[RMDB]
RNA sequence: GGGAACGACUCGAGUAGAGUCGAAAAGGUGCAAGAGCGUUGAGGGGAAUGAGACCCAGAACAUUUUAUUCUUAAAGGACUCCUAAUCUAAUGCAAUAUGCAAAAUAGAGAAGGAACAGCAGAAAGUAUACACUUAAGAUGCAGCAUCCACCUCACAAGCAUGAACUGGGUUCGCCCAGUUCAUGCUAAAAGAAACAACAACAACAAC
Reactivity to 2A3 in 0.01 (KOAc 150mM, MgCl2 10mM, bicine 150mM(pH8.5), 24C), signal-to-noise 1, nucleotides 027 to 156: g020g000u070g000c010a060a050g030a010g060c000g060u100u100g050a060g010g000g010g030a000a140u220g060a060g010a020c010c010c000a060g020a080a030c010a030u100u110u170u100a130u100u090c070u040u070a110a100a070g000g000a050c070u070c020c000u010a040a060u000c020u070a040a000u140g010c000a060a120u030a070u230g000c000a020a070a020a020u110a090g010a000g020a020a000g020g020a020a020c000a000g010c000a000g000a030a000a000g020u070a130u080a300c040a000c020u010u000a020a000g030a020u020g090c000a020g000c010a030u130c060c000a020c000c000u110c000a040c040a080